[RMDB]
RNA sequence: GGGAACGACUCGAGUAGAGUCGAAAAUUAUGGCAUGAAUUGGUUGCCGUUACCAAACUGGCGCUCUCUGCUGGGGUUGACGCCCGUCACCGCAGGGCAAAGUUAUGCUGACAUUGUGGCAGGAGCACUGCACGGAAUUUUUCGAAAUUCCGUGCAGAAAAGAAACAACAACAACAAC
Reactivity to 2A3 in 0.01 (KOAc 150mM, MgCl2 10mM, bicine 150mM(pH8.5), 24C), signal-to-noise 1, nucleotides 027 to 126: u210u060a030u080g030g000c030a020u110g100a300a240u200u260g200g030u140u170g050c000c000g000u010u020a090c070c030a100a000a000c150u070g050g000c050g010c010u030c010u010c000u050g000c030u060g000g090g000g010u040u090g030a010c050g000c050c030c000g080u090c020a080c080c000g000c090a020g000g030g000c030a040a010a000g130u170u050a160u150g020c040u050g020a020c010a080u180u150g080u080g090g010c000a000g020g010a010g000c020a000
Reactivity to DMS in 0.01 (KOAc 150mM, MgCl2 10mM, bicine 150mM(pH8.5), 24C), signal-to-noise 2, nucleotides 027 to 126: u000u010a060u000g010g010c000a070u000g000a140a140u000u000g010g010u000u010g020c000c000g000u000u000a150c110c070a110a110a130c150u010g010g000c010g020c040u010c030u010c020u000g000c010u000g010g010g020g000u000u000g020a110c230g010c040c040c100g010u010c040a100c100c050g040c090a110g000g020g020c050a030a080a100g010u010u010a100u010g020c040u000g000a160c080a120u010u000g020u000g000g000c040a030g020g010a080g000c040a090